[RMDB]
RNA sequence: GGGAACGACUCGAGUAGAGUCGAAAAGCUCGUGGGAUUGAUAUCGAUAGCCUAGAAUGUGUCGUAAACUUUGAUAUUCCUAGAGAUAGCGAAACCUACACACACCGUGCUGGCCGUACUGGUCGUAACGUGCACGUAUGUUCGCAUACGUGCACGUAAAAGAAACAACAACAACAAC
Reactivity to 2A3 in 0.01 (KOAc 150mM, MgCl2 10mM, bicine 150mM(pH8.5), 24C), signal-to-noise 1, nucleotides 027 to 126: g030c010u030c000g050u130g070g040g010a070u000u090g050a030u040a000u140c000g030a030u060a080g090c020c030u060a130g210a150a120u170g050u000g050u090c030g000u090a060a020a080c030u150u040u020g020a010u060a010u140u000c000c010u040a030g000a000g020a080u110a020g030c010g040a090a060a020c000c000u020a010c020a030c000a010c000a010c020c000g020u100g050c020u060g030g090c000c010g090u120a080c120u170g000g040u000c010g000u030a050
Reactivity to DMS in 0.01 (KOAc 150mM, MgCl2 10mM, bicine 150mM(pH8.5), 24C), signal-to-noise 1, nucleotides 027 to 126: g020c050u010c080g020u030g010g000g050a190u010u020g000a050u000a010u000c020g030a070u020a060g070c080c020u000a100g000a040a110u000g000u020g070u010c120g030u000a060a100a140c090u000u000u000g000a010u000a030u000u000c010c010u000a210g020a100g010a070u010a070g020c030g040a050a010a080c040c040u010a080c050a060c080a030c160a050c120c050g050u000g000c130u010g000g020c000c050g010u000a050c090u000g040g020u000c060g000u010a070